[RMDB]
RNA sequence: GGGAACGACUCGAGUAGAGUCGAAAAACUACCUGUCUCCUGAGAUUCUGCAGGCCGUUGGUGGAGGGCCUGGGGCAGGCAGCUACGGGCCAGAGUGUGACUGGUGGGCACUGGGCGUGUUCGCCUAAUGUGGGUACGCUUUCGAGCGUACCCACAUAAAAGAAACAACAACAACAAC
Reactivity to 2A3 in 0.01 (KOAc 150mM, MgCl2 10mM, bicine 150mM(pH8.5), 24C), signal-to-noise 1, nucleotides 027 to 126: a000c030u080a000c010c000u000g000u010c050u080c020c010u080g030a130g020a200u110u120c010u060g000c040a090g000g010c010c030g190u110u120g040g040u000g020g070a060g080g010g040c040c000u010g000g020g020g000c100a040g000g050c000a000g050c010u020a020c010g020g000g070c080c000a040g000a000g080u160g010u050g070a010c000u010g000g000u020g030g000g000c070a000c030u080g010g020g120c100g020u110g040u040u040c030g040c010c000u000a080

Source information: The data come from the RNA Mapping Database (RMDB), library OK1LIB. Chemical mapping of a 177-nucleotide RNA with 2A3. Values cover nucleotides 27 to 126. The RNA was probed in 150 mM KOAc, 10 mM MgCl2 and 150 mM bicine (pH 8.5) at 24 C.